[RMDB]
The data come from the RNA Mapping Database (RMDB), library OK2TRN. This 177-nucleotide RNA was probed chemically with DMS and 2A3. Values are in units of 0.01, from 0 to 300, in steps of 10. As a SHAPE reagent, 2A3 marks flexible, mostly unpaired nucleotides at the ribose 2'-OH. For 2A3 the reverse transcriptase was SuperScript II with manganese. DMS adducts were read by reverse transcription with MarathonRT.

RNA sequence: GGGAACGACUCGAGUAGAGUCGAAAAAAGGCGGUGUUCCUGAACCCCACAGAUGCGCUGCAUGGCGACAUCGGCAUUGUGGGCCGAGAUGAUCUGGUGGUCAUUGUGUCGAAGUCCGGCGCCACUGGCAUAGCCGGACAUUCGUGUCCGGCUAUGCAAAAGAAACAACAACAACAAC
Reactivity to DMS in 0.01 (KOAc 150mM, MgCl2 10mM, bicine 150mM(pH8.5), 24C), signal-to-noise 6, nucleotides 027 to 126: a070a050g010g000c060g020g000u000g000u000u010c020c010u000g010a100a220c110c010c000c050a290c050a050g000a070u000g010c040g010c030u000g010c290a070u000g010g010c070g000a070c040a110u000c000g010g010c030a100u010u010g020u010g000g010g000c010c020g000a060g000a060u010g000a040u000c020u010g020g010u020g010g000u000c020a030u000u000g010u000g010u000c030g000a090a080g010u010c110c020g010g010c030g010c010c080a060c070u010g010
Reactivity to 2A3 in 0.01 (KOAc 150mM, MgCl2 10mM, bicine 150mM(pH8.5), 24C), signal-to-noise 4, nucleotides 027 to 126: a000a000g110g000c120g090g060u080g040u110u050c000c000u010g030a060a060c010c000c020c000a040c010a030g090a030u050g000c020g010c030u040g010c050a110u120g070g000c030g030a050c030a050u020c000g000g020c030a080u110u170g130u170g130g080g020c020c010g080a070g000a040u110g000a040u030c070u240g130g100u250g070g000u150c010a020u010u100g030u020g020u040c020g030a050a020g040u020c040c000g000g010c000g000c000c030a030c030u020g040